RNA sequence: GGGAACGACUCGAGUAGAGUCGAAAAGGAACUGUCAUUCAACCCCAAAAAUCUAGUGCAAAUAUUGUCUUAAUUACUUAGGCUAAAAGAAAUAAGUAUUAAAGCGGGACAAGGCAUAGACAUUUGAAAUAGGCAAUCCGCUUCGGCGGAUUGCCAACUAAUACUCAUACUUCGGUAUGAGUAUUAGAAAAGAAACAACAACAACAAC
Reactivity to 2A3 in 0.01 (KOAc 150mM, MgCl2 10mM, bicine 150mM(pH8.5), 24C), signal-to-noise 1, nucleotides 027 to 156: g080g030a010a080c150u210g040u110c110a130u100u040c010a020a080c010c000c010c000a030a040a030a060a030u050c070u060a100g090u010g130c030a110a090a190u130a130u060u090g000u020c010u030u060a090a100u100u000a030c000u020u000a020g080g000c000u150a190a080a150a000g080a010a230a010u060a060a040g040u000a000u100u080a280a020a040g070c130g000g030g000a000c000a000a000g030g000c000a000u000a000g000a020c010a080u110u090u090g100a110a110a050u140a090g000g000c000a000a000u010c000c040g010c170u020u150c220g100g000c000g040g060a010u000u000g000c000c000a000a000
This 207-nucleotide RNA was probed chemically with 2A3. The 2A3 profile rests on 524 reads. Conditions: 150 mM KOAc, 10 mM MgCl2 and 150 mM bicine (pH 8.5), 24 C.